[RMDB]
RNA sequence: GGGAACGACUCGAGUAGAGUCGAAAAGCAGAUACGCUUCGGGUUUACGAGAUGUCGAUGGGGCCGCUGGAGGCUUCACGUCCAUGGGCCACAAAGGAUGUUGUCGGCGCGUACCGUUUUCUGCAGCAUUCGCGCACCUGUUCGCAGGUGCGCGAAUAAAAGAAACAACAACAACAAC
Reactivity to 2A3 in 0.01 (KOAc 150mM, MgCl2 10mM, bicine 150mM(pH8.5), 24C), signal-to-noise 1, nucleotides 027 to 126: g000c000a010g110a110u060a050c040g040c000u000u120c000g130g000g120u040u050u150a020c020g000a000g030a050u020g000u090c000g000a140u090g110g000g000g080c000c030g040c040u040g000g000a040g010g000c000u050u110c080a000c090g140u000c040c030a140u170g000g000g000c000c040a060c010a010a060a040g240g000a060u000g080u070u000g010u010c060g000g030c090g000c000g230u040a000c000c000g040u190u000u060u000c060u000g000c030a090g030c030
Notes: Conditions: 150 mM KOAc, 10 mM MgCl2 and 150 mM bicine (pH 8.5), 24 C. Chemical mapping of a 177-nucleotide RNA with 2A3. 2A3 adducts were read by reverse transcription with SuperScript II with manganese.